[RMDB]
RNA sequence: GGGAACGACUCGAGUAGAGUCGAAAAACGGUGCGGAAGUUCGCGCUACCGUGAAACGCGAAAAUCGGACGGUGGCUGCAAGUCGCAUCGCAAAACCGCGGCAAGUGGAGUUAGCGAGAGGAGGCUGAAACCAUCCAACACUUCGGUGUUGGAUGAACUUCUGGUCUUAGUUCGCUAAGACCAGAAGAAAAGAAACAACAACAACAAC
Reactivity to DMS in 0.01 (KOAc 150mM, MgCl2 10mM, bicine 150mM(pH8.5), 24C), signal-to-noise 1, nucleotides 027 to 156: a020c070g000g000u020g010c000g040g000a080a130g030u000u000c080g030c120g010c000u000a010c020c000g000u000g010a110a030a030c040g020c020g000a150a090a170a140u000c050g020g020a070c040g000g080u010g060g030c020u000g040c020a040a100g010u020c010g010c000a050u000c030g010c000a030a010a070a060c030c050g010c030g000g020c040a110a090g010u020g000g010a080g020u000u000a130g000c070g010a110g050a080g010g000a110g020g000c030u000g030a060a070a140c120c000a050u000c000c010a020a030c010a000c010u000u000c300g100g000u000g040u010u000g020g000a000u000g020a020a070
Reactivity to 2A3 in 0.01 (KOAc 150mM, MgCl2 10mM, bicine 150mM(pH8.5), 24C), signal-to-noise 3, nucleotides 027 to 156: a000c010g000g000u010g010c010g030g030a090a100g130u130u160c090g030c000g000c000u000a000c000c000g000u020g090a170a110a010c080g000c040g060a080a030a010a110u190c030g020g040a010c020g000g030u020g070g000c140u190g010c060a040a000g040u040c000g000c000a010u010c000g010c010a060a090a010a010c010c020g040c020g040g010c050a120a050g010u040g060g030a050g030u090u100a030g050c020g030a010g010a020g050g020a020g010g030c010u020g040a070a020a030c030c000a000u030c000c000a000a000c000a000c000u040u090c220g050g000u010g000u010u000g000g000a000u000g000a000a000